Annotation:
The record gives the reactivity of an RNA of 207 nucleotides to 2A3 and DMS. It was measured as part of the RMDB library M2RFPK. The RNA was probed in 150 mM KOAc, 10 mM MgCl2 and 150 mM bicine (pH 8.5) at 24 C. 2A3 adducts were read by reverse transcription with SuperScript II with manganese. The 2A3 profile rests on 1,339 reads.

[RMDB]
RNA sequence: GGGAACGACUCGAGUAGAGUCGAAAAAAUAAUCUUCAGGGCAGGGUGAAAUUCCCGAUCGGCGGUAAAGUCCGCGAGCCGAACGAAUAAGGUUUGGCAGGAACCGGUGAGAUUCCGGUACCGACAGCAAAGCCUCAACACUUCGGUGUUGAGGCAAUAGAAAUGAUAUGUUCGCAUAUCAUUUCUAAAAAGAAACAACAACAACAAC
Reactivity to 2A3 in 0.01 (KOAc 150mM, MgCl2 10mM, bicine 150mM(pH8.5), 24C), signal-to-noise 1, nucleotides 027 to 156: a000a000u100a010a010u050c050u130u110c060a040g040g090g000c020a020g070g000g000u010g020a040a010a070u060u040c010c010c030g030a150u190c030g000g000c020g000g000u010a000a000a000g000u010c000c000g000c000g020a010g000c010c010g030a010a000c010g060a150a130u120a140a080g130g010u000u000u000g010g000c000a000g010g010a000a010c000c000g000g000u000g000a000g000a030u010u000c000c000g000g000u000a000c000c010g020a000c000a000g080c020a040a080a000g010c000c000u000c000a000a000c000a000c000u040u110c240g060g000u000g000u000u010g000a000g000g000c000a000a000
Reactivity to DMS in 0.01 (KOAc 150mM, MgCl2 10mM, bicine 150mM(pH8.5), 24C), signal-to-noise 2, nucleotides 027 to 156: a100a080u000a060a060u000c020u000u010c040a080g040g000g050c100a070g000g010g000u000g000a070a060a290u000u000c000c000c000g010a100u000c020g000g000c000g010g020u000a110a160a040g010u000c000c040g040c000g000a270g010c000c000g020a010a040c040g010a120a140u000a080a140g010g020u000u000u000g000g010c000a030g000g010a030a020c000c000g020g040u010g000a290g010a300u000u010c000c000g010g030u000a020c000c000g000a040c070a050g020c060a070a050a140g030c010c000u000c010a010a000c000a010c010u010u020c290g060g000u000g010u000u000g000a000g000g030c030a000a000